[RMDB]
RNA sequence: GGGAACGACUCGAGUAGAGUCGAAAAACAUGGGGGUGACAUACACCGGAAAACCGUAGAGAUACGGUCCCCCUUGUAGUCGGUGUACAGGUGGUGCAAGCCUGUCGUCAGGUAGUGUCGUGCGCUGAGUUUAAUUGUAAUUCGUUACAAUUAAACUAAAAGAAACAACAACAACAAC
Reactivity to 2A3 in 0.01 (KOAc 150mM, MgCl2 10mM, bicine 150mM(pH8.5), 24C), signal-to-noise 2, nucleotides 027 to 126: a000c020a040u060g000g000g000g000g010u060g030a000c010a030u140a020c030a060c000c000g030g000a040a090a000a010c000c000g000u000a000g010a000g000a060u010a020c000g000g030u040c010c000c000c000c000u000u050g040u010a030g040u010c020g000g000u020g000u020a020c010a030g000g060u070g030g050u140g120c040a040a000g000c000c000u020g030u030c010g040u020c030a030g000g020u080a070g040u020g010u100c070g000u060g000c000g000c070u090g030
Reactivity to DMS in 0.01 (KOAc 150mM, MgCl2 10mM, bicine 150mM(pH8.5), 24C), signal-to-noise 2, nucleotides 027 to 126: a070c030a040u010g020g000g010g000g000u020g010a080c100a110u010a040c070a090c020c000g000g010a030a030a040a060c000c000g010u010a000g010a170g010a210u000a000c010g000g000u010c010c010c000c010c030u000u000g020u000a030g010u010c020g000g020u000g000u020a030c160a040g000g020u010g000g010u030g010c130a120a120g000c010c020u010g010u010c070g000u030c000a290g000g000u000a300g040u000g000u000c150g000u000g000c220g000c130u000g000